[RMDB]
RNA sequence: GGGAACGACUCGAGUAGAGUCGAAAAGUGGAUGACUCCUAGUUCCACUGCGAGGGUGAGGAUUCCGUGGAUGAUGAGGCCGACUUUGCGCAUGGCUGAUUCGCUGAGUGGUCGCGGUGGUUGGCUAGCUGGCACGCCUUUCAUUGUGGAGAGAGUGCGAGACCCAGAUAUUCGUAUCUGGGUCUCGAAAAGAAACAACAACAACAAC
Reactivity to 2A3 in 0.01 (KOAc 150mM, MgCl2 10mM, bicine 150mM(pH8.5), 24C), signal-to-noise 1, nucleotides 027 to 156: g000u000g000g000a040u040g080a110c010u080c040c030u060a030g120u080u000c030c040a070c010u040g040c050g060a030g060g030g000u060g030a010g030g010a070u110u000c030c040g000u070g040g050a080u090g010a040u020g000a040g020g000c030c040g110a110c040u040u120u240g000c090g040c050a040u180g060g000c020u020g060a070u000u050c020g000c030u050g040a040g000u040g010g040u010c000g000c000g010g000u050g010g000u060u080g100g000c010u010a020g000c000u020g000g000c000a000c000g010c000c000u030u130u090c080a070u060u070g050u070g030g010a070g000a010g000a000g030u100g000

About this RNA
Structure probing data (2A3) for a 207-nucleotide construct. The RNA was probed in 150 mM KOAc, 10 mM MgCl2 and 150 mM bicine (pH 8.5) at 24 C. 2A3 adducts were read by reverse transcription with SuperScript II with manganese. The data come from the RNA Mapping Database (RMDB), library OK3TST.